[RMDB]
An RNA of 207 nucleotides, treated with DMS and 2A3 and read out base by base. For 2A3 the reverse transcriptase was SuperScript II with manganese. The data come from the RNA Mapping Database (RMDB), library OK3TST.
RNA sequence: GGGAACGACUCGAGUAGAGUCGAAAAGACGCCAGUUCGGAACUAUAAGGACAACGAACAGAUCCCAAGUUGUCCUUAUAACUGGACUGAGUACAGUUAGUUGUAUAGCAUACUCUUGGGAUCUGUUGUAUGCUAUAUAGUUCUAACUGUAGUGUCAAUUAAUAGUCCACUUCGGUGGACUAUUAAUAAAAGAAACAACAACAACAAC
Reactivity to DMS in 0.01 (KOAc 150mM, MgCl2 10mM, bicine 150mM(pH8.5), 24C), signal-to-noise 2, nucleotides 027 to 156: g000a060c010g030c040c000a020g040u000u020c020g030g000a090a120c120u000a010u000a040a070g000g010a060c000a030a050c030g020a130a110c060a040g020a020u000c000c000c000a130a300g020u000u010g000u000c010c040u010u010a010u000a020a090c030u010g040g010a040c000u000g000a240g010u010a080c010a060g010u000u000a050g020u010u000g020u000a020u000a010g020c020a060u010a090c020u000c060u000u010g020g020g010a020u000c010u010g010u000u000g010u000a010u000g000c000u000a100u000a030u000a090g010u010u000c000u010a010a030c010u000g010u010a040g030u020g040u000c060a100
Reactivity to 2A3 in 0.01 (KOAc 150mM, MgCl2 10mM, bicine 150mM(pH8.5), 24C), signal-to-noise 2, nucleotides 027 to 156: g000a000c010g000c000c000a010g000u020u050c060g030g020a090a060c030u010a000u010a060a040g030g020a060c010a060a000c080g140a060a010c020a060g000a000u010c000c000c010a040a050g040u040u020g010u000c000c000u000u010a010u000a020a010c000u020g050g000a010c000u030g040a050g120u080a080c000a000g000u000u020a030g010u070u260g010u000a020u060a030g010c020a010u030a110c000u010c010u070u050g000g000g030a000u000c010u000g020u020u040g000u010a030u020g010c010u000a000u000a010u000a120g050u040u020c000u000a010a010c000u010g010u030a050g010u010g020u000c000a000

The RNA was probed in 150 mM KOAc, 10 mM MgCl2 and 150 mM bicine (pH 8.5) at 24 C.